[RMDB]
This 207-nucleotide RNA was probed chemically with 2A3 and DMS. DMS (dimethyl sulfate) methylates the pairing face of unpaired adenines and cytosines. 2A3 adducts were read by reverse transcription with SuperScript II with manganese. The data come from the RNA Mapping Database (RMDB), library OK3TST.
RNA sequence: GGGAACGACUCGAGUAGAGUCGAAAAGGUCUUUGUGCUGCUCUUGCAAGAGGCGCUCCACGGGCACCUGGCGAUCCCCAUGCAUGUGGGUGACUCCGUAGCCCCGCAUGGGUCUGAUGAGGGCCAGGUCGGCGACCACGCGCUCGGCGAGCACGGCUCGUAGCCAAUUAUUCGUAAUUGGCUACGAAAAAGAAACAACAACAACAAC
Reactivity to 2A3 in 0.01 (KOAc 150mM, MgCl2 10mM, bicine 150mM(pH8.5), 24C), signal-to-noise 4, nucleotides 027 to 156: g080g020u050c050u030u100u070g060u070g010c020u000g030c030u020c020u080u100g000c010a110a020g000a040g040g010c000g020c040u100c090c050a070c040g030g040g020c040a000c010c010u000g000g010c010g030a060u050c000c000c000c000a000u000g000c010a020u140g020u300g020g000g040u060g110a150c070u030c190c090g050u060a020g000c000c000c020c010g000c000a000u000g000g010g030u050c090u100g060a060u070g060a080g060g140g030c010c000a000g010g000u000c020g070g000c030g040a100c000c020a010c010g000c000g000c010u000c010g010g000c010g010a000g010c020a010c020g030g010c010
Reactivity to DMS in 0.01 (KOAc 150mM, MgCl2 10mM, bicine 150mM(pH8.5), 24C), signal-to-noise 1, nucleotides 027 to 156: g020g020u000c000u000u000u000g040u010g010c010u030g020c020u010c040u000u000g090c040a130a090g030a070g020g010c000g030c000u010c050c060a070c020g010g000g050c070a050c020c000u010g000g040c000g020a090u000c030c010c010c000a040u000g030c030a080u010g050u010g050g030g000u000g000a120c060u000c160c140g040u010a280g030c010c000c020c010g000c020a050u000g020g030g010u010c050u000g020a130u010g010a120g010g010g040c020c000a040g040g020u010c040g050g000c040g010a140c030c110a080c000g010c010g020c040u000c000g020g030c010g020a110g030c030a040c000g020g050c010